[RMDB]
RNA sequence: GGGAACGACUCGAGUAGAGUCGAAAAGUAGUAAGUUCGCUUACUACAAAAAGCGUACUACUUAGGCCGUCGCUUUCGAUAAGUCCCAAAUAGGACUUUUGACGAAAGUGACGGAACUACCUAAGUAUCGCAAAAAAGGACUCCUUCGGGAGUCCAAUACAGUUUCUGUGUUCGCACAGAAACUGUAAAAAGAAACAACAACAACAAC
Reactivity to 2A3 in 0.01 (KOAc 150mM, MgCl2 10mM, bicine 150mM(pH8.5), 24C), signal-to-noise 1, nucleotides 027 to 156: g000u000a000g000u000a000a000g000u010u140c240g000c130u000u020a000c000u010a030c040a070a040a000a000a000g000c030g090u140a130c050u000a000c000u030u000a010g000g000c030c000g000u000c000g010c010u000u030u000c010g020a050u000a120a000g020u020c000c070c050a180a200a120u290a050g000g000a000c000u070u060u090u160g100a090c000g000a000a000a000g000u000g000a000c000g000g000a000a000c010u090a060c000c000u010a000a000g000u000a000u110c030g000c000a110a070a000a000a000a070g090g010a000c000u000c000c040u050u080c280g160g020g000a000g000u000c010c000a010a020